[RMDB]
RNA sequence: GGGAACGACUCGAGUAGAGUCGAAAACUCCGGGACGCCUUGCAUGCUGGGGACGAAGCCGCCCCCGGGCGCUCCCCUCGAUCCACCUUCGAGGGGGUUCACACCCCCAACCUGCGGGCCGGCUAUUCUUCUUUUCCUUGCCUCGUCUUCAACGGUCGAAUAUAAAACCGUUCGCGGUUUUAUAUUCAAAAGAAACAACAACAACAAC
Reactivity to 2A3 in 0.01 (KOAc 150mM, MgCl2 10mM, bicine 150mM(pH8.5), 24C), signal-to-noise 1, nucleotides 027 to 156: c040u010c010c000g030g040g040a040c030g010c000c060u050u300g020c040a050u030g010c050u040g000g000g000g000a040c060g040a070a010g050c090c020g030c000c010c040c070c110g070g010g000c020g030c000u090c020c010c000c000u000c000g020a030u150c110c050a050c030c120u030u010c000g000a010g030g030g000g010g030u300u210c060a100c010a010c080c010c010c000c000a010a020c000c050u000g000c000g040g020g030c020c030g010g040c010u030a050u110u090c010u100u020c010u100u140u090u000c040c020u040u070g000c000c030u080c040g010u080c040u120u170c060a090a060c060g090g110u120c100